[RMDB]
This 207-nucleotide RNA was probed chemically with 2A3. As a SHAPE reagent, 2A3 marks flexible, mostly unpaired nucleotides at the ribose 2'-OH. The 2A3 profile rests on 985 reads. For 2A3 the reverse transcriptase was SuperScript II with manganese.
RNA sequence: GGGAACGACUCGAGUAGAGUCGAAAAGGGGAUGUAUAAGCUCUACGUUGCAUGUCGAGCAACUGCCAGCUCGUAAAAAAGGCGGAAACUAAUAUAAUCGCAGACGAUUAUAACUACGCAGUAGCAGCUUAAUAACUGUCAUACUGCCGUCUCUCCAGAAUAAAGCAUCCUUCGGGAUGCUUUAUUCAAAAGAAACAACAACAACAAC
Reactivity to 2A3 in 0.01 (KOAc 150mM, MgCl2 10mM, bicine 150mM(pH8.5), 24C), signal-to-noise 2, nucleotides 027 to 156: g020g030g010g000a060u040g040u060a090u050a170a040g030c010u000c030u030a010c030g060u060u090g000c040a070u110g060u150c020g010a000g000c000a000a130c010u040g010c000c000a000g000c000u010c020g060u100a000a020a020a030a000a000g000g000c030g000g000a130a050a000c080u070a110a190u050a050u030a070a050u010c010g020c170a070g140a300c080g010a030u000u050a030u040a100a070c160u190a080c020g010c010a000g000u000a000g010c000a000g030c010u050u040a080a010u040a070a030c000u010g030u020c020a110u010a020c000u010g020c010c000g000u000c020u010c010u000c060c020a020